[RMDB]
RNA sequence: GGGAACGACUCGAGUAGAGUCGAAAAAGCCCUAAGGCCGGGCGUGGGGCUGGGGUCGCAGGGAGAGUAACCGUGAGCCGGCGCCCAGCCUUCAGGGCGCUCCCUCGAGCUAUGGGAGCUGCCCCCGUGUCCUCGGAACGUUCGCGUUCCGAGGACAAAAAGAAACAACAACAACAAC
Reactivity to 2A3 in 0.01 (KOAc 150mM, MgCl2 10mM, bicine 150mM(pH8.5), 24C), signal-to-noise 2, nucleotides 027 to 126: a000g000c040c000c010u000a000a000g020g000c000c000g020g000g000c050g030u040g050g300g000g040c000u040g040g030g030g030u080c030g020c090a120g070g080g070a070g000a000g060u020a120a000c020c020g060u080g140a000g040c000c030g010g000c000g020c070c000c000a000g000c000c010u010u020c040a000g000g000g010c010g000c000u010c000c000c020u040c020g060a070g040c100u120a110u130g000g000g000a010g010c060u100g020c010c000c000c010c000g040

Conditions: 150 mM KOAc, 10 mM MgCl2 and 150 mM bicine (pH 8.5), 24 C. This 177-nucleotide RNA was probed chemically with 2A3. For 2A3 the reverse transcriptase was SuperScript II with manganese.